[RMDB]
Chemical mapping of a 207-nucleotide RNA with 2A3.
RNA sequence: GGGAACGACUCGAGUAGAGUCGAAAAUCUUGAGAGCUCCGCUCCUUGUAGCUUUGAGACUACCGCCCUUUUGCUUCCUUCUCGCUGGCUGACUCGAGGACGCGACCGGUGGUACACCAAGAGGUCUCCACCUCCUAGGGUACUUUUUUCUAACACCGUACCUACUACGGUUCGCCGUAGUAGGUACAAAAGAAACAACAACAACAAC
Reactivity to 2A3 in 0.01 (KOAc 150mM, MgCl2 10mM, bicine 150mM(pH8.5), 24C), signal-to-noise 1, nucleotides 027 to 156: u030c030u030u080g060a130g000a010g090c030u060c140c070g050c060u090c020c110u000u100g100u130a050g010c010u100u060u250g040a060g000a070c010u130a090c000c050g050c030c010c030u080u010u060u030g020c000u040u040c020c000u010u100c050u010c040g080c080u060g020g030c010u020g070a060c000u000c020g050a060g020g040a090c000g010c010g000a000c000c000g040g000u020g030g060u040a030c040a120c070c000a020a050g030a020g020g030u020c050u050c110c040a020c020c010u020c000c010u040a090g000g060g020u050a040c000u100u110u090u050u090u120c080u100a210a050c050a000c080c040
2A3 adducts were read by reverse transcription with SuperScript II with manganese. The RNA was probed in 150 mM KOAc, 10 mM MgCl2 and 150 mM bicine (pH 8.5) at 24 C.